An RNA of 207 nucleotides, treated with DMS and 2A3 and read out base by base.
RNA sequence: GGGAACGACUCGAGUAGAGUCGAAAACAGGAGGUUAGCAUAGCUCCAUUCUACUAUGCAGCUAGUCGUCGUUUUCGACGUCUAGGAUAGACCCCUACAGCAGGGUCAAUGAACUGCUGAUUACCGCGUCUCGUAGCGCGGGUUCUGGCUACGUACACAGUGAUUUACUAUUCGUAGUAAAUCACUGAAAAGAAACAACAACAACAAC
Reactivity to DMS in 0.01 (KOAc 150mM, MgCl2 10mM, bicine 150mM(pH8.5), 24C), signal-to-noise 5, nucleotides 027 to 156: c040a110g010g020a060g010g020u010u000a160g030c000a020u000a030g010c010u000c100c300a230u000u000c010u010a020c010u000a010u000g010c020a300g020c010u000a020g000u000c000g030u000c010g000u000u010u000u000c030g030a000c010g020u010c010u000a020g010g010a190u010a130g010a090c010c000c010c010u010a120c010a020g040c000a020g010g020g030u000c040a090a100u010g010a080a070c020u000g010c010u010g010a210u010u000a040c010c010g010c010g010u010c040u010c210g020u010a100g010c000g040c000g020g020g010u000u000c040u000g010g010c040u010a080c080g020u000a120c110a220
Reactivity to 2A3 in 0.01 (KOAc 150mM, MgCl2 10mM, bicine 150mM(pH8.5), 24C), signal-to-noise 7, nucleotides 027 to 156: c060a020g010g020a020g010g040u120u130a010g010c010a010u000a010g010c030u030c080c010a070u160u060c020u070a070c000u000a010u030g000c020a010g070c000u000a010g010u010c000g000u000c010g020u060u080u160u300c020g010a000c000g000u000c000u010a000g010g000a000u040a030g020a000c000c010c000c050u090a080c040a020g030c020a010g010g000g030u050c060a010a080u170g050a040a030c030u040g000c000u010g010a110u020u160a100c000c000g010c010g040u030c060u050c120g100u130a030g000c000g000c000g030g020g000u040u030c050u050g040g000c020u060a020c070g040u050a030c110a000
It was measured as part of the RMDB library OK3TST.